[RMDB]
RNA sequence: GGGAACGACUCGAGUAGAGUCGAAAACGCAUGAUGCCCACAGCGGUCUUCGCAUCGAAUUUGCUCAGGUCAACCACGGACACGUCGGCAAUGCUCUUGGCGGAACUGGUCGCAUCGCCCCAGCCGCUCAUCCACCACCGUUCGCGGUGGUGGAUGAAAAAGAAACAACAACAACAAC
Reactivity to DMS in 0.01 (KOAc 150mM, MgCl2 10mM, bicine 150mM(pH8.5), 24C), signal-to-noise 1, nucleotides 027 to 126: c180g000c040a020u070g010a040u000g000c030c020c040a150c200a100g000c020g010g000u040c030u000u030c090g000c090a100u000c000g020a030a060u000u000u060g000c000u000c060a020g000g000u020c000a060a190c230c000a150c160g060g040a120c090a030c200g000u000c040g000g000c020a060a110u030g000c040u000c000u000u000g020g040c030g000g020a070a040c090u000g000g000u000c110g000c080a150u100c040g000c030c020c000c020a070g020c000c020g030c150
Reactivity to 2A3 in 0.01 (KOAc 150mM, MgCl2 10mM, bicine 150mM(pH8.5), 24C), signal-to-noise 3, nucleotides 027 to 126: c100g030c030a100u110g040a040u050g060c000c000c000a080c060a030g010c040g000g050u050c050u090u090c060g010c010a040u030c030g050a050a050u070u040u050g040c040u050c080a050g030g030u020c000a040a130c040c040a030c040g010g010a040c020a020c070g070u050c040g030g020c030a010a140u150g030c010u050c010u050u100g010g000c010g020g000a050a100c030u040g020g070u070c040g000c050a080u050c020g020c000c000c000c020a020g070c060c000g050c040

Structure probing data (DMS and 2A3) for a 177-nucleotide construct. It was measured as part of the RMDB library OK1LIB. Values cover nucleotides 27 to 126. As a SHAPE reagent, 2A3 marks flexible, mostly unpaired nucleotides at the ribose 2'-OH. DMS adducts were read by reverse transcription with MarathonRT. The DMS profile rests on 1,281 reads. The RNA was probed in 150 mM KOAc, 10 mM MgCl2 and 150 mM bicine (pH 8.5) at 24 C.